RNA sequence: GGGAACGACUCGAGUAGAGUCGAAAAUUAGUGCGUUUUUAGAAGAUAAUGAGUGGGAAUCCGUUAUUCAUCAUACGGACUCACUCAAUCGUCUUGUUUUCCGAGAGUCGUGGUCAGACGGUUAUGGCCUACACGAGCUCUUCGGAGCUCGUGUAGGAAAAGAAACAACAACAACAAC
Reactivity to 2A3 in 0.01 (KOAc 150mM, MgCl2 10mM, bicine 150mM(pH8.5), 24C), signal-to-noise 2, nucleotides 027 to 126: u160u120a060g290u030g120c000g010u000u000u100u300u120a110g080a000a040g030a030u140a300a020u150g000a000g000u000g000g060g040a160a210u000c000c000g100u000u000a100u160u220c190a230u170c070a030u050a050c010g040g010a140c000u000c000a000c000u000c000a020a000u020c030g000u000c000u000u000g120u130u000u020u000c220c100g010a040g000a000g090u030c030g010u030g000g200u090c110a000g010a040c000g040g000u050u040a180u140g060g050
Reactivity to DMS in 0.01 (KOAc 150mM, MgCl2 10mM, bicine 150mM(pH8.5), 24C), signal-to-noise 1, nucleotides 027 to 126: u030u020a080g000u000g010c060g010u000u000u040u000u000a000g100a010a030g000a000u000a060a240u020g000a020g000u000g000g010g030a160a140u000c000c000g090u000u020a060u040u000c300a160u080c300a170u060a000c010g070g000a080c000u000c000a000c000u000c000a000a000u000c260g010u000c000u000u000g000u000u000u000u070c080c000g090a150g010a040g030u000c020g050u020g000g000u000c100a030g030a040c260g000g020u000u000a180u050g000g050
The data come from the RNA Mapping Database (RMDB), library OK1LIB. This 177-nucleotide RNA was probed chemically with 2A3 and DMS. 2A3 adducts were read by reverse transcription with SuperScript II with manganese. The RNA was probed in 150 mM KOAc, 10 mM MgCl2 and 150 mM bicine (pH 8.5) at 24 C. The DMS profile rests on 1,087 reads.